About this RNA:
The data come from the RNA Mapping Database (RMDB), library 15KREP. Structure probing data (DMS and 2A3) for a 177-nucleotide construct. The 2A3 profile rests on 2,577 reads. 2A3 adducts were read by reverse transcription with SuperScript II with manganese.

RNA sequence: GGGAACGACUCGAGUAGAGUCGAAAAGGAGAACCCACCUCCAGAGGACCCCUUCAGCGAACAGAAGGGCUCCUCCUCCUCGGGAGUAGGCCCGUAGCGAUGGGGAGGGAUGCUAGGAGUUGGGGGACGGUAUAGUAAUCUUCGGAUUACUAUACCGAAAAGAAACAACAACAACAAC
Reactivity to DMS in 0.01 (KOAc 150mM, MgCl2 10mM, bicine 150mM(pH8.5), 24C), signal-to-noise 3, nucleotides 027 to 126: g000g000a150g020a300a240c010c000c000a030c040c000u000c000c000a120g010a050g000g010a140c280c010c010c000u000u000c010a070g000c070g000a070a060c120a120g010a120a100g020g000g010c130u000c110c010u000c010c020u000c040c080u010c110g020g020g010a130g020u030a110g020g010c000c000c000g000u000a070g040c080g010a170u000g000g020g000g000a030g000g020g010a130u030g000c050u010a130g020g000a030g020u000u010g000g000g020g000g000a120
Reactivity to 2A3 in 0.01 (KOAc 150mM, MgCl2 10mM, bicine 150mM(pH8.5), 24C), signal-to-noise 2, nucleotides 027 to 126: g030g030a080g010a060a020c000c000c000a010c000c000u000c000c000a010g000a020g070g040a060c010c000c010c000u000u010c020a060g030c030g120a080a040c010a120g120a150a090g030g000g000c010u010c000c000u000c010c000u020c000c010u080c030g030g020g000a030g020u070a050g040g070c000c000c000g030u060a040g040c020g040a030u040g000g000g030g010a040g000g020g020a060u140g070c020u020a060g010g020a000g020u020u020g040g010g000g010g020a010